[RMDB]
The record gives the reactivity of an RNA of 177 nucleotides to 2A3 and DMS. The data come from the RNA Mapping Database (RMDB), library OK2TRN. 2A3 adducts were read by reverse transcription with SuperScript II with manganese. DMS adducts were read by reverse transcription with MarathonRT. For 2A3, 18,729 sequencing reads were counted. The RNA was probed in 150 mM KOAc, 10 mM MgCl2 and 150 mM bicine (pH 8.5) at 24 C.
RNA sequence: GGGAACGACUCGAGUAGAGUCGAAAAGAAAGGCAGCCAUUGCAGCCCACGAAGCCAGUCGAAGCAUGCUUUUGCAUGCCGCCCACGACUGAGGGCAGCUGCGGCACUGAGGGCAGCUGCCGAAAGAGCCUAUAUAUCAGUUCGCUGAUAUAUAGGCAAAAGAAACAACAACAACAAC
Reactivity to 2A3 in 0.01 (KOAc 150mM, MgCl2 10mM, bicine 150mM(pH8.5), 24C), signal-to-noise 8, nucleotides 027 to 126: g060a030a090a010g070g010c020a020g030c050c070a110u100u220g020c030a030g030c000c020c000a030c060g080a090a010g090c030c010a000g000u020c020g040a050a010g000c000a010u020g010c010u160u250u260u300g010c020a000u000g000c030c010g040c010c020c000a080c020g020a010c020u040g030a120g030g060g000c010a000g000c000u010g010c000g050g020c080a050c200u200g060a160g010g060g000c000a000g000c010u010g010c010c000g000a010a020a000g060a020
Reactivity to DMS in 0.01 (KOAc 150mM, MgCl2 10mM, bicine 150mM(pH8.5), 24C), signal-to-noise 9, nucleotides 027 to 126: g010a110a120a140g010g010c010a040g030c040c160a120u010u010g020c060a090g000c020c010c030a140c160g010a100a120g000c080c010a020g000u000c010g010a300a140g000c010a000u000g000c000u000u010u000u000g010c000a010u000g010c010c090g000c100c030c080a300c030g000a020c020u010g010a140g010g000g020c010a030g000c010u000g010c030g000g000c090a120c180u000g010a090g000g000g000c020a040g000c020u000g000c000c000g000a020a070a100g010a200